[RMDB]
RNA sequence: GGGAACGACUCGAGUAGAGUCGAAAAUACGUUGUGGACGAAGCGGCUAAAACUUACACAACUCGCCCAAAGCACCCUGCCCGUCGGGUCGCUGAGGGUUAACUUAAUAGACACGGCUACGCAUGUAGUACCGACAGCAGAGUACUGGCGGACGGGGGAUAAUGCAUUAGUUCGCUAAUGCAUUAUCAAAAGAAACAACAACAACAAC
Reactivity to DMS in 0.01 (KOAc 150mM, MgCl2 10mM, bicine 150mM(pH8.5), 24C), signal-to-noise 3, nucleotides 027 to 156: u000a100c080g030u000u000g000u020g010g010a120c100g020a070a070g030c030g000g100c110u000a060a070a100a090c080u000u000a090c040a060c030a020a030c030u000c070g050c020c000c010a050a210a080g020c020a100c010c000c010u000g000c020c030c040g040u000c020g010g010g030u000c050g070c000u000g010a300g020g020g010u000u000a040a100c070u000u000a090a150u000a130g000a110c030a060c040g010g000c020u000a020c020g010c120a130u010g020u000a030g010u000a060c030c000g010a070c040a060g000c030a090g020a140g030u000a060c030u000g000g010c020g010g010a040c020g010g000g010g000
Reactivity to 2A3 in 0.01 (KOAc 150mM, MgCl2 10mM, bicine 150mM(pH8.5), 24C), signal-to-noise 6, nucleotides 027 to 156: u180a030c060g010u010u010g010u000g020g030a050c120g050a100a020g060c040g080g020c080u080a060a050a040a070c030u080u120a020c020a000c000a020a050c020u030c090g030c000c000c000a000a030a000g030c020a020c010c010c010u030g020c000c030c010g020u020c010g000g000g020u020c060g000c010u010g010a040g010g010g010u000u020a020a000c000u010u110a020a030u060a100g090a030c040a010c090g020g000c020u030a010c030g100c110a070u280g020u070a040g000u020a120c000c020g050a040c020a020g030c030a020g050a010g140u110a110c010u020g040g020c020g010g010a010c010g000g020g000g000
The record gives the reactivity of an RNA of 207 nucleotides to DMS and 2A3. Conditions: 150 mM KOAc, 10 mM MgCl2 and 150 mM bicine (pH 8.5), 24 C. For DMS the reverse transcriptase was MarathonRT. For 2A3, 8,418 sequencing reads were counted. The DMS profile rests on 8,464 reads. The data come from the RNA Mapping Database (RMDB), library RSTRND.